Overview
Structure probing data (2A3 and DMS) for a 207-nucleotide construct. DMS adducts were read by reverse transcription with MarathonRT. Reactivities are given for positions 27 through 156.
RNA sequence: GGGAACGACUCGAGUAGAGUCGAAAAUACCGUUGACUGGGCUCAUCAUCCGGAAGUGUUCGUCCUAGCCGGAGGGCCAAGCAGAGAUCUUUGCGCGAACUGCGCACGGAGAAGCCCUGGCGAGGUGACGUAGGACCCGGGUUCAAUUCCCGGCAGCCCUUUCACUAUUGUUCGCAAUAGUGAAAGGAAAAGAAACAACAACAACAAC
Reactivity to 2A3 in 0.01 (KOAc 150mM, MgCl2 10mM, bicine 150mM(pH8.5), 24C), signal-to-noise 1, nucleotides 027 to 156: u050a000c000c020g030u000u050g080a170c020u020g040g000g020c000u010c080a090u000c000a010u000c020c020g000g030a240a100g060u090g120u120u070c040g010u050c000c000u040a030g000c000c000g080g170a040g010g020g000c000c010a070a010g070c090a030g070a040g000a130u000c000u000u000u030g040c040g000c020g060a210a200c200u200g000c000g000c000a000c010g030g000a040g030a060a040g030c010c010c030u030g020g010c010g030a110g000g080u120g020a000c010g000u010a090g010g080a020c050c010c000g010g000g000u000u030c050a100a070u050u070c000c000c000g010g000c010a040g000c000
Reactivity to DMS in 0.01 (KOAc 150mM, MgCl2 10mM, bicine 150mM(pH8.5), 24C), signal-to-noise 1, nucleotides 027 to 156: u000a130c050c040g050u010u010g030a070c060u010g010g040g000c080u020c070a140u000c060a140u000c020c000g000g010a070a110g030u000g030u010u010c050g000u010c000c020u010a200g030c020c030g010g040a160g030g010g020c000c020a060a100g010c070a090g000a140g000a170u010c030u000u010u020g030c000g000c030g030a080a130c110u000g010c000g060c020a000c080g020g020a110g010a120a200g040c040c000c010u000g040g060c020g020a070g010g020u020g010a010c020g000u010a000g030g010a090c020c010c030g020g010g010u000u010c080a060a300u000u000c040c010c000g020g070c010a120g000c110
Reactivities are rounded to 0.1 and cut off at 0 and 3.